[RMDB]
RNA sequence: GGGAACGACUCGAGUAGAGUCGAAAAAGAUAUGGAGCAUGCCGCUAGGCUUGGAUUUAUGUGGGAACAGUAGUCGGAAACGACUACCCAGUACCACAUUGUCAGCCUAUGCAUGCUCCUAAGUCAACGGACAUUAAGACUUCGGUCUUAAUGUCCGAAAAGAAACAACAACAACAAC
Reactivity to DMS in 0.01 (KOAc 150mM, MgCl2 10mM, bicine 150mM(pH8.5), 24C), signal-to-noise 1, nucleotides 027 to 126: a140g040a010u000a300u000g000g010a030g020c000a030u000g010c010c040g000c000u000a000g020g000c000u000u010g040g020a040u000u000u000a000u000g070u000g000g000g010a210a120c300a050g000u000a000g000u000c000g000g000a060a100a240c000g010a040c000u020a000c000c000c010a110g020u000a270c000c000a000c000a010u020u000g010u000c000a040g000c000c000u000a000u040g000c010a010u000g010c000u020c000c000u000a020a070g000u000c040a170a230
Description: The record gives the reactivity of an RNA of 177 nucleotides to DMS. Reactivities are rounded to 0.1 and cut off at 0 and 3. It was measured as part of the RMDB library TTRDES. The RNA was probed in 150 mM KOAc, 10 mM MgCl2 and 150 mM bicine (pH 8.5) at 24 C.